[RMDB]
RNA sequence: GGGAACGACUCGAGUAGAGUCGAAAAUCUGGGCUCUAAAGUUGGACACGUCCACGCUCACGGUGAUGAGGGUGUGAUCCACGGCGGGCAAGCAGUAGCUUAGGUCGGUCUGCACCGCAACAGUGGUCGUGGCGGCAUGCUUCCCGGACCGCCGCGGCCAGGAUUGAGUCUUCGGACUCAAUCCUGGAAAAGAAACAACAACAACAAC
Reactivity to DMS in 0.01 (KOAc 150mM, MgCl2 10mM, bicine 150mM(pH8.5), 24C), signal-to-noise 2, nucleotides 027 to 156: u010c030u010g020g000g040c010u000c050u000a040a060a110g030u000u000g020g010a070c100a090c080g010u000c050c010a040c020g020c030u000c030a050c030g000g010u000g010a300u010g020a100g010g020g040u000g020u010g000a110u000c010c030a050c010g010g000c060g020g000g000c050a050a110g050c020a080g020u000a130g040c050u000u000a080g050g000u000c010g010g000u000c020u010g000c000a150c000c040g000c030a030a090c040a120g020u000g010g020u010c010g020u010g000g030c000g020g050c030a090u000g010c070u000u010c010c020c000g020g010a040c010c000g000c020c010g030c000g010g040
Reactivity to 2A3 in 0.01 (KOAc 150mM, MgCl2 10mM, bicine 150mM(pH8.5), 24C), signal-to-noise 3, nucleotides 027 to 156: u060c040u050g020g100g000c040u060c060u170a130a090a080g060u080u050g060g000a040c030a010c180g050u070c000c000a040c030g140c000u020c010a050c110g060g210u230g040a300u050g010a040g020g050g020u010g040u100g030a090u010c010c000a010c000g000g030c010g020g030g000c060a080a010g000c000a020g010u150a030g000c020u110u150a050g020g150u140c060g000g070u020c030u010g020c020a030c040c010g050c040a090a080c050a070g030u050g010g030u030c010g020u020g010g000c010g000g030c010a020u080g040c010u030u020c010c020c020g000g020a040c000c000g000c010c010g020c010g010g000
Conditions: 150 mM KOAc, 10 mM MgCl2 and 150 mM bicine (pH 8.5), 24 C. Structure probing data (DMS and 2A3) for a 207-nucleotide construct. Values cover nucleotides 27 to 156. For DMS the reverse transcriptase was MarathonRT. Source: RMDB library OK3TST, as collected in RNAgym.